[RMDB]
RNA sequence: GGGAACGACUCGAGUAGAGUCGAAAAACCGUCGAGUACCAAGAGAAGGUACACGACGGAAUCACAACAUCUCAGUUGUGGAAACGUCUUUCCCGACGUAAAAGGGAUGAAAUCAAGGAAACUUGAAGCUGAGAUCUGACUUCGGUCAGAUCUCAGCAAAAGAAACAACAACAACAAC
Reactivity to 2A3 in 0.01 (KOAc 150mM, MgCl2 10mM, bicine 150mM(pH8.5), 24C), signal-to-noise 1, nucleotides 027 to 126: a000c000c000g000u020c000g010a010g000u000a000c020c000a030a040g080a000g090a300a070g060g000u000a000c020a010c030g000a000c000g000g000a000a000u100c050a000c000a010a010c000a160u010c010u000c130a020g000u000u000g000u080g000g000a080a050a060c000g000u000c020u000u100u030c000c000c020g020a000c000g030u210a000a000a000a000g010g000g000a000u030g060a030a080a100u010c000a000a000g090g000a020a010a070c000u000u000g000a040a000

Source: RMDB library OK1LIB, as collected in RNAgym. The record gives the reactivity of an RNA of 177 nucleotides to 2A3. For 2A3, 803 sequencing reads were counted. The reactions ran in a buffer of 150 mM KOAc, 10 mM MgCl2 and 150 mM bicine (pH 8.5), at 24 C. Values cover nucleotides 27 to 126.